[RMDB]
RNA sequence: GGGAACGACUCGAGUAGAGUCGAAAAGUACUACCGUUCGCGGUAGUACAAAUAAUCCAGCCUGGAAAGCCUGGAGCCAAAACUAUGGUAAAGGCACCAUAGAAAGAGCAGAGUUCGCUCUGCUCAAGACGUUCAUAAUGUUCGCAUUAUGAACGUCAAAAGAAACAACAACAACAAC
Reactivity to DMS in 0.01 (KOAc 150mM, MgCl2 10mM, bicine 150mM(pH8.5), 24C), signal-to-noise 2, nucleotides 027 to 126: g000u010a020c000u000a000c000c000g000u000u010c200g000c010g000g030u000a000g000u000a010c010a050a100a030u030a070a100u000c000c010a020g010c140c000u000g020g020a130a150a050g000c250c010u000g000g010a060g000c020c020a080a090a090a140c020u000a000u000g000g020u010a060a090a100g000g000c130a070c000c000a000u000a030g030a110a100a080g000a010g020c010a020g010a040g020u000u010c230g020c000u010c010u000g000c010u010c010a090a030
Reactivity to 2A3 in 0.01 (KOAc 150mM, MgCl2 10mM, bicine 150mM(pH8.5), 24C), signal-to-noise 3, nucleotides 027 to 126: g010u000a000c010u000a000c000c010g010u030u040c230g000c010g110g000u000a000g000u000a010c000a010a010a000u030a000a000u000c010c000a020g020c020c010u080g040g130a190a050a020g020c000c010u010g030g030a040g030c020c010a010a100a080a090c020u030a030u030g000g000u080a090a140a140g140g040c050a030c000c000a010u020a050g130a060a190a000g000a010g020c000a000g000a010g000u030u070c140g050c080u000c000u000g000c000u010c000a000a020